[RMDB]
RNA sequence: GGGAACGACUCGAGUAGAGUCGAAAAGGGGUCUCUAUCAUCGAUCGAUACACAGGCUUUGAUCAUACUGAAGCCUCCACGGUAUGGGAGCCUGGUAUCGGGAGAUAGAGACGGAGGCACCCGUGGCGGUUACUAUUCUUCGGAAUAGUAACCGCAAGCAAUACUAGAGGUUCGCCUCUAGUAUUGCAAAAGAAACAACAACAACAAC
Reactivity to 2A3 in 0.01 (KOAc 150mM, MgCl2 10mM, bicine 150mM(pH8.5), 24C), signal-to-noise 2, nucleotides 027 to 156: g030g010g060g020u000c000u000c000u000a000u000c000a000u300c000g010a000u000c010g000a000u010a000c230a000c000a300g010g030c050u300u180u020g000a000u010c000a010u000a000c000u040g040a130a030g020c000c010u000c000c000a010c000g000g000u000a000u010g000g000g000a010g010c000c000u000g000g010u000a000u000c010g000g000g000a030g000a010u000a000g000a000g000a010c000g010g030a010g010g000c000a040c020c010c000g050u150g140g000c010g000g000u000u010a000c000u010a010u010u000c020u030u080c290g050g000a000a000u000a000g000u000a000a000c000c010g000c000a000a000